RNA sequence: GGGAACGACUCGAGUAGAGUCGAAAAAUACAAGGGGAGGUUUCGGCCACAUGUUGUAUGCAGAAAGCGUGAGGAAGGUAGCACUUAGACACUCACGAGUAGCGGUUCGGCAGUAGUGCUAAAAUGAGACAGUACGAAAAGUUCGCUUUUCGUACAAGAUGGGAAAACAGUUCGCUGUUUUCCCAUCAAAAGAAACAACAACAACAAC
Reactivity to DMS in 0.01 (KOAc 150mM, MgCl2 10mM, bicine 150mM(pH8.5), 24C), signal-to-noise 1, nucleotides 027 to 156: a130u010a080c100a050a090g020g020g000g040a120g040g040u000u000u010c040g020g000c040c050a030c070a080u000g000u000u000g040u000a060u000g020c030a090g000a040a060a110g000c010g020u010g010a090g020g000a060a020g000g020u010a050g000c090a020c080u010u000a090g000a100c040a080c010u000c050a050c000g000a080g000u000a050g000c040g000g000u000u000c040g020g010c000a050g010u000a050g010u010g010c010u000a070a050a080a150u000g000a100g000a120c020a070g000u000a000c000g000a000a010a030a050g020u000u020c300g030c000u000u000u000u000c020g030u000a080c010a010a030
Reactivity to 2A3 in 0.01 (KOAc 150mM, MgCl2 10mM, bicine 150mM(pH8.5), 24C), signal-to-noise 3, nucleotides 027 to 156: a000u160a050c080a080a070g010g020g000g030a020g010g040u030u040u050c040g020g010c050c040a040c010a060u080g010u020u040g040u120a070u070g020c020a000g120a060a060a020g070c020g000u040g000a020g030g020a060a020g040g030u050a000g030c010a000c070u030u030a040g040a110c010a000c070u020c000a020c010g020a020g020u030a020g030c050g090g010u070u060c020g070g000c000a010g020u090a030g030u030g030c000u060a020a010a010a090u060g010a010g000a020c070a030g020u000a000c000g010a000a000a000a000g030u040u060c140g020c050u000u000u000u000c010g000u000a010c000a000a010